[RMDB]
RNA sequence: GGGAACGACUCGAGUAGAGUCGAAAAGUAAUGGCAUUUCAUGAGCUAGGACCUACAAUUGAUAUACAUGCGGGUGGUUCAGAUUUACAAUUUCCACAUCAUGAAAAUGAAAUAGCACAAUCAGAAGGUAGGUUAGCUUCUUCGGAAGCUAACCUACAAAAGAAACAACAACAACAAC
Reactivity to 2A3 in 0.01 (KOAc 150mM, MgCl2 10mM, bicine 150mM(pH8.5), 24C), signal-to-noise 2, nucleotides 027 to 126: g040u040a030a040u060g180g000c040a010u120u000u000c010a000u050g040a000g130c060u020a110g030g040a100c000c000u050a080c000a180a250u170u000g000a000u090a040u110a300c040a000u020g000c090g000g000g130u000g000g000u050u050c050a000g010a090u210u210u020a000c090a120a170u000u000u000c000c000a090c000a000u210c020a070u000g070a040a000a000a040u040g070a000a020a200u190a070g090c000a000c050a200a140u080c000a080g000a060a000g070
Reactivity to DMS in 0.01 (KOAc 150mM, MgCl2 10mM, bicine 150mM(pH8.5), 24C), signal-to-noise 1, nucleotides 027 to 126: g030u000a090a000u000g000g000c010a080u000u000u040c050a000u030g000a000g000c040u000a140g160g000a040c000c000u000a180c000a170a050u000u040g010a140u000a140u000a170c100a000u000g040c300g010g030g210u000g040g000u000u000c190a180g000a040u000u000u050a050c120a100a180u000u000u000c020c110a000c040a140u010c000a000u000g000a100a100a030a080u000g000a070a000a140u050a060g000c030a040c120a000a000u000c050a040g000a180a140g000
The data come from the RNA Mapping Database (RMDB), library OK1LIB. Chemical mapping of a 177-nucleotide RNA with 2A3 and DMS. Values cover nucleotides 27 to 126. In probing experiments dimethyl sulfate is read out at A N1 and C N3, which are open when not base-paired. Conditions: 150 mM KOAc, 10 mM MgCl2 and 150 mM bicine (pH 8.5), 24 C.